[RMDB]
RNA sequence: GGGAACGACUCGAGUAGAGUCGAAAAUACGCUUUAGCUGCCUAAAAACCAGCUAGCGUGACUUCUACAAGAUUGCUUGUGUCCUGUUAGAAGUCUCAAAAUAGCAAGCUACGGUUACGAAAUUGUCUAGUUUCGUGACAAGAGAUUGAUAGACUCGCACUGUAUCCCGGUUCGCCGGGAUACAGUGAAAAGAAACAACAACAACAAC
Reactivity to 2A3 in 0.01 (KOAc 150mM, MgCl2 10mM, bicine 150mM(pH8.5), 24C), signal-to-noise 2, nucleotides 027 to 156: u050a000c010g000c000u150u190u150a010g010c000u010g000c000c000u030a020a050a000a020a070c000c010a000g010c010u000a000g000c010g000u010g000a010c010u010u010c000u000a000c010a000a040g000a010u030u080g000c010u010u010g000u000g000u020c000c010u010g010u030u010a010g010a010a010g030u010c010u040c170a140a170a020a070u230a050g010c000a000a000g000c000u010a010c010g000g020u000u000a000c000g000a000a000a020u080u110g000u000c000u000a000g000u000u000u000c010g000u000g010a000c000a000a000g020a000g040a040u090u300g130a030u010a000g010a010c010u000c040g050